[RMDB]
RNA sequence: GGGAACGACUCGAGUAGAGUCGAAAAUUGAAAUUGAACCGUCCUGUUAGCGAAAGAUAGGCAGAAGAUACGAAAUGUGUGACAGCAUGGGAAGUAAAGGCAGACCGUGGUUCCCUUGAGUAUCUUAAUUAGGGGGACGAGUUCGCUCGUCCCCCAACAAGACAAGAGACUUCGGUCUCUUGUCUUGAAAAGAAACAACAACAACAAC
Reactivity to DMS in 0.01 (KOAc 150mM, MgCl2 10mM, bicine 150mM(pH8.5), 24C), signal-to-noise 1, nucleotides 027 to 156: u000u000g020a040a050a130u000u010g010a090a120c070c040g000u000c000c010u000g020u000u000a120g000c050g040a110a080a130g080a070u000a050g010g010c030a060g020a070a050g000a110u000a060c030g020a100a040a060u030g010u000g020u000g030a130c130a140g020c040a020u000g020g030g000a100a090g030u000a010a050a060g000g000c000a040g000a150c010c030g100u020g020g000u000u000c010c010c000u030u010g000a260g020u010a030u000c020u010u010a070a150u000u010a170g000g000g020g070g000a000c010g000a040g020u020u000c210g000c040u000c000g000u030c010c020c000c010c000a000a030